RNA sequence: GGGAACGACUCGAGUAGAGUCGAAAACUUAGUCAUCAUUGCUUCUAGAGGCAAUGAUGUGCCUUCUGUUUGUUUUCUUCUUUACACACUGACAUUUUAAUAAAAGUAUUCACACGCAGACUAACUGGUUCAUGCCACUUGUGAUAUAAUAAACCAGAUGUAAGCCUAAAUUCGUUUAGGCUUACAUAAAAGAAACAACAACAACAAC
Reactivity to 2A3 in 0.01 (KOAc 150mM, MgCl2 10mM, bicine 150mM(pH8.5), 24C), signal-to-noise 6, nucleotides 027 to 156: c030u060u060a020g060u070c000a000u000c000a000u000u000g010c020u090u040c080u180a150g050a090g200g000c000a000a010u000g000a000u000g010u020g050c000c020u140u180c070u070g090u070u080u030g080u010u060u050u000c020u070u000c000u060u130u100a070c090a000c010a030c060u080g060a040c070a170u110u200u120u130a120a190u190a060a120a060a030g080u050a070u120u130c030a010c000a010c080g050c030a020g050a080c040u090a240a060c050u140g030g020u100u060c070a070u130g040c010c030a060c060u080u070g000u020g030a010u030a000u020a090a050u110a070a070a030c070c070a040g020
Reactivity to DMS in 0.01 (KOAc 150mM, MgCl2 10mM, bicine 150mM(pH8.5), 24C), signal-to-noise 3, nucleotides 027 to 156: c060u000u000a100g020u000c010a020u000c010a030u000u000g000c010u000u000c100u010a230g000a270g030g000c010a020a030u000g030a020u000g020u000g010c000c040u000u010c080u000g010u000u000u000g010u000u000u000u010c040u000u000c030u010u000u000a120c040a120c080a180c050u000g000a040c040a080u010u000u000u000a050a140u010a070a080a060a120g000u000a060u000u000c040a050c040a080c140g000c040a050g000a080c050u000a090a110c080u000g000g020u010u000c030a080u000g010c000c020a090c070u010u010g020u010g010a100u000a070u000a060a080u000a050a040a060c050c040a070g010
Structure probing data (2A3 and DMS) for a 207-nucleotide construct. The reactions ran in a buffer of 150 mM KOAc, 10 mM MgCl2 and 150 mM bicine (pH 8.5), at 24 C. For DMS, 7,692 sequencing reads were counted. Reactivities are given for positions 27 through 156. It was measured as part of the RMDB library OK3TST.